The data come from the RNA Mapping Database (RMDB), library TTRDES. This 177-nucleotide RNA was probed chemically with DMS and 2A3. The DMS profile rests on 8,133 reads. The reactions ran in a buffer of 150 mM KOAc, 10 mM MgCl2 and 150 mM bicine (pH 8.5), at 24 C.
RNA sequence: GGGAACGACUCGAGUAGAGUCGAAAAGAUAUGGAGCCAGAAACCUUUUGACGUUCGGAUGUUCGGAAACGAACAUACGAACGAUAAGGUUCUGGCUCCUAAGUCAAAAUGCCAUCUUCGGAUGGCAGUACUUGGUAUGGUUCGCCAUACCAAGUACAAAAGAAACAACAACAACAAC
Reactivity to DMS in 0.01 (KOAc 150mM, MgCl2 10mM, bicine 150mM(pH8.5), 24C), signal-to-noise 5, nucleotides 027 to 126: g010a030u000a300u010g000g000a020g020c000c000a000g020a040a040a040c000c000u000u000u000u010g020a230c120g000u000u010c000g000g000a020u000g000u010u000c010g000g010a070a080a140c000g010a010a000c000a000u010a010c010g000a000a000c010g010a040u000a020a000g000g010u000u000c000u000g010g000c000u000c000c010u000a000a070g000u010c040a090a070a150a200u000g000c000c000a000u000c000u000u020c270g010g000a010u000g000g000c000a010
Reactivity to 2A3 in 0.01 (KOAc 150mM, MgCl2 10mM, bicine 150mM(pH8.5), 24C), signal-to-noise 5, nucleotides 027 to 126: g010a000u040a030u140g030g040a010g020c010c010a010g060a150a240a210c090c020u110u110u140u290g300a180c180g000u000u000c000g030g020a010u000g000u000u010c000g030g000a040a040a050c010g010a000a010c000a000u010a010c000g000a000a000c000g000a000u040a020a000g020g010u000u000c000u010g000g000c010u000c000c000u000a000a000g010u000c000a020a020a020a110u130g000c000c000a010u010c000u040u050c160g190g010a000u010g000g000c010a000